An RNA of 177 nucleotides, treated with 2A3 and DMS and read out base by base. The DMS profile rests on 3,984 reads. Values cover nucleotides 27 to 126. DMS adducts were read by reverse transcription with MarathonRT.
RNA sequence: GGGAACGACUCGAGUAGAGUCGAAAAGUGCCGAUGUUCGCAUCGGCACAAAGGCUAAGCAAUAAAAAUCAGCUUGUACGCUAAGCCACUAACGAGCAGAAAAAAUCCCUCCCUUCGGGGAGGGAAACAUACAUUCAAGCUUCGGCUUGAAUGUAUGAAAAGAAACAACAACAACAAC
Reactivity to 2A3 in 0.01 (KOAc 150mM, MgCl2 10mM, bicine 150mM(pH8.5), 24C), signal-to-noise 3, nucleotides 027 to 126: g010u000g000c000c000g010a000u010g020u060u080c170g010c120a010u010c010g000g000c000a000c010a000a010a000g010g000c000u050a020a050g000c020a080a190u140a220a150a070a020a020u130c060a030g070c040u030u050g030u070a010c040g000c020u030a020a010g010c000c000a030c080u050a050a050c030g030a020g010c040a100g300a070a080a020a010a000a050u040c010c010c000u000c010c000c000u030u080c160g050g000g000g000a000g000g020g010a000a000a000
Reactivity to DMS in 0.01 (KOAc 150mM, MgCl2 10mM, bicine 150mM(pH8.5), 24C), signal-to-noise 4, nucleotides 027 to 126: g020u010g000c010c000g020a020u010g020u000u030c210g050c010a010u000c020g000g000c000a000c000a010a050a060g000g020c000u000a080a040g010c020a120a090u020a020a040a070a110a120u010c100a100g010c040u000u000g010u000a110c140g000c010u000a060a040g000c000c000a080c150u010a060a060c060g000a020g020c030a240g010a010a020a060a060a130a130u010c010c000c000u000c000c010c010u000u030c200g010g000g010g000a010g000g000g000a000a000a040